The record gives the reactivity of an RNA of 177 nucleotides to DMS and 2A3. DMS adducts were read by reverse transcription with MarathonRT. Conditions: 150 mM KOAc, 10 mM MgCl2 and 150 mM bicine (pH 8.5), 24 C. For 2A3 the reverse transcriptase was SuperScript II with manganese.
[RMDB]
RNA sequence: GGGAACGACUCGAGUAGAGUCGAAAACAAAACAAAUACUUUUUAAGCCCGCAUUCGACAAGUUAGGGUUGGAUGAAAGGGAGCUAAAGGCUUACCCGGACACCCUGUAUGGACUAAAAGAAACAAACGCAGUAGUACAGUUCGCUGUACUACUGCGAAAAGAAACAACAACAACAAC
Reactivity to DMS in 0.01 (KOAc 150mM, MgCl2 10mM, bicine 150mM(pH8.5), 24C), signal-to-noise 1, nucleotides 027 to 126: c090a060a040a050a110c070a060a050a130u000a130c030u000u040u000u000u000a120a080g010c000c000c000g000c020a020u010u010c070g000a100c010a040a090g020u090u060a130g000g020g010u000u020g000g000a050u050g000a060a260a070g000g000g000a110g090c020u000a020a130a100g000g010c120u000u070a000c050c050c020g000g050a150c130a020c060c050c010u040g000u070a120u030g030g010a020c110u000a000a000a000a030g000a050a060a020c130a030a010a100
Reactivity to 2A3 in 0.01 (KOAc 150mM, MgCl2 10mM, bicine 150mM(pH8.5), 24C), signal-to-noise 2, nucleotides 027 to 126: c010a040a020a080a010c090a050a030a070u300a170c150u030u210u130u060u080a110a070g030c000c000c000g000c050a060u070u090c040g030a000c060a060a060g050u180u060a090g060g020g000u090u100g050g000a040u060g090a110a020a090g040g000g020a040g000c000u100a230a000a000g210g000c000u040u080a110c080c000c000g020g020a050c050a010c010c010c010u090g010u080a030u050g080g010a000c000u020a030a080a080a030g010a010a040a000c010a000a020a030